RNA sequence: GGGAACGACUCGAGUAGAGUCGAAAAUGGUGAUUUCUCCUGCACCUUUAUCAAUGGAGGAACUCGACUUUGCUGUGGGUCCCAAAGGGACCUUAGGUGCAGACAGUUACCGGCGGUGAAGUGUGAGCAUAGGUUCGUGUCUUCGGACACGAACCAAGUAUCUUAAGUGGUUCGCCACUUAAGAUACAAAAGAAACAACAACAACAAC
Reactivity to DMS in 0.01 (KOAc 150mM, MgCl2 10mM, bicine 150mM(pH8.5), 24C), signal-to-noise 2, nucleotides 027 to 156: u000g020g030u010g020a270u000u000u000c020u000c010c000u000g020c030a080c030c000u020u010u030a070u010c160a120a140u000g000g010a110g010g010a030a060c050u010c000g000a050c030u010u000u000g030c010u020g020u000g020g000g000u000c010c000c000a080a120a210g030g030g030a010c000c010u000u010a030g030g020u000g020c040a150g000a100c150a110g030u000u000a040c010c010g000g020c050g010g000u000g020a020a070g020u000g000u010g010a040g030c050a100u000a110g000g000u010u010c000g040u020g010u000c010u000u010c300g010g020a030c000a010c010g010a020a010c000c010a010a060
Reactivity to 2A3 in 0.01 (KOAc 150mM, MgCl2 10mM, bicine 150mM(pH8.5), 24C), signal-to-noise 5, nucleotides 027 to 156: u140g010g000u010g010a030u020u070u000c010u010c010c000u130g060c030a030c000c020u100u230u120a070u050c060a040a050u270g020g000a020g010g020a030a030c010u020c020g020a010c020u010u030u030g020c020u020g020u100g040g000g000u000c000c000c020a130a070a070g030g000g010a020c010c020u020u070a010g000g000u010g010c010a030g090a220c040a030g020u050u100a010c000c010g020g000c020g000g040u020g020a020a020g040u090g090u100g110a030g040c060a120u100a190g000g000u000u000c000g000u000g000u000c000u030u060c190g080g000a000c000a000c000g000a000a000c000c000a000a000